[RMDB]
RNA sequence: GGGAACGACUCGAGUAGAGUCGAAAAGAAAGAAAGAAGAAUCACCAGGAGGCAAGGAUCCUCAACUACGUUGUUCGGGCACCUUGAGUUGAGAGGAGCUAGUGGUGCGCCCGGCCUGGAGAUCAAAACACGACAGGCGGGUUCGCCCGCCUGUCAAGAGGAACAACAUGUUCGCAUGUUGUUCCUCAAAAGAAACAACAACAACAAC
Reactivity to 2A3 in 0.01 (KOAc 150mM, MgCl2 10mM, bicine 150mM(pH8.5), 24C), signal-to-noise 1, nucleotides 027 to 156: g130a010a010a000g050a050a050a000g120a010a010g020a030a040u010c010a000c030c010a000g030g020a000g020g020c030a070a160g030g020a010u010c000c000u010c010a010a010c050u230a060c060g090u080u040g020u040u210c040g030g000g000c000a000c030c050u180u300g050a000g010u010u010g040a030g000a000g050g000a020g030c020u010a010g100u040g100g000u020g030c030g020c010c000c020g000g000c000c010u050g000g010a060g010a010u030c050a000a060a080a000c080a020c150g000a000c000a000g000g000c030g030g000g000u000u040c040g030c000c010c000g000c000c000u000g000u000c000a000a010

The record gives the reactivity of an RNA of 207 nucleotides to 2A3.